[RMDB]
RNA sequence: GGGAACGACUCGAGUAGAGUCGAAAAGAUAUGGACGUGCUAGGGAGCUCGUAAUCGGAAACGAUUACUGAGCGAAGAACUAGCACGCGUCCUAAGUCAAAGGUUCCGAACUUCGGUUCGGAACCAACAUUGUCUUCUGCUUCGGCAGAAGACAAUGAAAAGAAACAACAACAACAAC
Reactivity to DMS in 0.01 (KOAc 150mM, MgCl2 10mM, bicine 150mM(pH8.5), 24C), signal-to-noise 1, nucleotides 027 to 126: g000a000u000a000u010g000g000a010c140g030u000g010c010u000a010g010g000g080a030g010c000u000c000g020u000a000a000u000c010g000g010a000a000a000c010g000a000u000u000a000c010u010g020a000g020c000g000a010a100g000a160a220c010u000a000g000c000a010c060g000c300g010u000c000c000u000a000a180g000u000c000a080a130a140g020g000u000u000c000c000g030a000a000c010u010u020c200g000g000u000u000c000g030g000a000a010c000c000a070a060

Chemical mapping of a 177-nucleotide RNA with DMS. DMS adducts were read by reverse transcription with MarathonRT. The DMS profile rests on 1,704 reads.